[RMDB]
RNA sequence: GGGAACGACUCGAGUAGAGUCGAAAACUUAAGUGUGAUUCAGAUGAGACUGCAUUCAGUGUCAUGGAGGGGACACACACAUAUAGGCCUCACAUGAGCUUUGAUAAAGCAGUAAUAGAUGAGGAGAGGCUGAUGAGUCAUUCGUGACUCAUCAGCCAAAAGAAACAACAACAACAAC
Reactivity to 2A3 in 0.01 (KOAc 150mM, MgCl2 10mM, bicine 150mM(pH8.5), 24C), signal-to-noise 1, nucleotides 027 to 126: c030u080u110a190a060g090u040g020u010g140a160u010u070c050a020g020a100u050g000a000g030a030c030u010g050c120a140u070u270c000a000g080u030g230u100c000a010u050g060g080a110g090g090g030g120a000c010a000c000a000c000a000c050a100u170a000u050a140g040g090c000c000u000c000a010c010a020u040g130a050g150c000u000u040u150g070a100u140a060a000a000g000c000a030g050u030a030a050u060a220g200a180u000g020a050g000g000a140g000a020
Reactivity to DMS in 0.01 (KOAc 150mM, MgCl2 10mM, bicine 150mM(pH8.5), 24C), signal-to-noise 1, nucleotides 027 to 126: c000u010u000a100a060g000u000g020u000g010a170u000u000c020a140g000a070u000g000a060g020a050c010u000g000c300a270u050u000c060a020g010u020g000u010c000a040u010g000g000a200g030g000g000g000a040c060a100c010a030c120a100c200a140u030a110u020a100g000g000c000c000u000c030a020c060a100u000g000a180g030c020u000u000u000g010a060u010a090a050a020g000c000a080g000u000a090a050u000a180g020a120u010g000a060g000g000a140g000a100

Structure probing data (2A3 and DMS) for a 177-nucleotide construct. For 2A3 the reverse transcriptase was SuperScript II with manganese. For 2A3, 551 sequencing reads were counted. DMS adducts were read by reverse transcription with MarathonRT. The DMS profile rests on 520 reads. It was measured as part of the RMDB library OK2TRN. The reactions ran in a buffer of 150 mM KOAc, 10 mM MgCl2 and 150 mM bicine (pH 8.5), at 24 C. Values cover nucleotides 27 to 126. High DMS reactivity at an A or C suggests that its Watson-Crick edge is free.